The record gives the reactivity of an RNA of 207 nucleotides to DMS and 2A3. Conditions: 150 mM KOAc, 10 mM MgCl2 and 150 mM bicine (pH 8.5), 24 C. DMS adducts were read by reverse transcription with MarathonRT. Source: RMDB library OK3TST, as collected in RNAgym.

RNA sequence: GGGAACGACUCGAGUAGAGUCGAAAACUCUAAGACCCCGUCCAGCUCAGUUGUGUGGAGAUCAGUGAAAACAAGCCACUUGUCCUAAACUCUGUUCUGCUACUAGGUUGAGGCUUUGCACCAUCGCAUGCAGGCCUCCAAGGAACCUUCUGCAACGUAUAACUCCGUUAUUCGUAACGGAGUUAUAAAAAGAAACAACAACAACAAC
Reactivity to DMS in 0.01 (KOAc 150mM, MgCl2 10mM, bicine 150mM(pH8.5), 24C), signal-to-noise 2, nucleotides 027 to 156: c050u000c030u040a140a130g010a140c040c000c000c050g010u000c020c030a090g000c020u020c020a100g020u010u000g030u000g040u000g000g010a080g000a050u000c040a100g000u000g000a120a070a090a140c070a070a140g020c080c030a070c080u000u000g000u000c020c030u010a070a090a050c030u000c030u000g000u010u000c050u000g010c020u000a090c060u000a080g040g010u000u010g030a040g020g000c020u000u000u000g000c000a050c010c020a160u000c180g050c060a110u000g010c000a040g000g000c010c000u000c020c140a080a110g020g000a090a050c030c030u000u000c070u000g020c030a080a100c070g040
Reactivity to 2A3 in 0.01 (KOAc 150mM, MgCl2 10mM, bicine 150mM(pH8.5), 24C), signal-to-noise 2, nucleotides 027 to 156: c060u070c060u090a130a020g080a180c030c010c020c020g060u000c020c030a030g030c020u030c060a090g030u100u080g030u070g030u110g110g000a050g000a020u120c040a020g000u010g100a020a040a060a000c060a020a040g000c000c000a060c020u000u070g020u030c000c010u050a080a090a050c050u000c010u080g050u110u000c000u050g080c010u030a030c000u010a050g100g030u020u070g030a010g020g000c000u260u260u090g000c010a000c030c020a180u160c060g000c120a010u050g000c000a000g040g010c000c000u000c000c000a020a020g060g000a010a020c010c030u010u040c040u050g030c020a080a030c040g060